The data come from the RNA Mapping Database (RMDB), library OK3TST.
This 207-nucleotide RNA was probed chemically with DMS and 2A3.
DMS adducts were read by reverse transcription with MarathonRT.
For DMS, 2,913 sequencing reads were counted.
For 2A3, 1,864 sequencing reads were counted.
[RMDB]
RNA sequence: GGGAACGACUCGAGUAGAGUCGAAAACGGGCGGGGGCCCACUGGAAGGACGUGAACUUCUCGGCGGGGACGGCCACGUACACUUGCUCGUCGUAGAGGCCGCUGUGUACCAGCAUGCCCUCGCGGCUAAAGACCAAAAAGGCGUUUCGCAGCGAGGAUAUCAAACACAAUUCGUUGUGUUUGAUAUAAAAGAAACAACAACAACAAC
Reactivity to DMS in 0.01 (KOAc 150mM, MgCl2 10mM, bicine 150mM(pH8.5), 24C), signal-to-noise 1, nucleotides 027 to 156: c050g020g010g070c030g070g020g030g040g040c070c290c040a050c000u020g000g000a050a040g020g040a080c020g060u000g000a140a140c000u000u010c020u010c060g040g000c080g030g000g000g000a060c050g010g000c020c030a040c100g000u000a050c070a030c030u000u000g030c010u030c000g070u000c030g020u030a120g000a150g000g010c000c050g000c000u000g010u000g000u010a160c030c100a060g020c030a300u000g000c010c000c000u000c020g030c050g000g000c020u010a010a030a070g000a050c000c010a020a170a090a130a100g020g030c020g020u000u000u010c050g010c050a120g000c020g010a080g000g010
Reactivity to 2A3 in 0.01 (KOAc 150mM, MgCl2 10mM, bicine 150mM(pH8.5), 24C), signal-to-noise 3, nucleotides 027 to 156: c030g030g050g000c000g020g000g000g060g000c030c030c010a020c020u030g020g050a100a080g070g060a050c070g080u100g050a080a040c000u040u010c050u000c010g030g000c030g010g010g010g070a070c030g020g050c080c060a070c050g070u080a030c080a040c060u090u200g010c020u010c040g010u010c000g000u080a020g010a030g050g010c010c000g000c010u050g040u020g010u130a070c010c000a000g000c020a040u190g000c000c000c000u000c010g010c000g010g000c000u090a120a050a010g030a110c000c020a100a040a030a050a010g080g020c050g030u010u020u050c070g040c040a030g020c020g050a030g040g010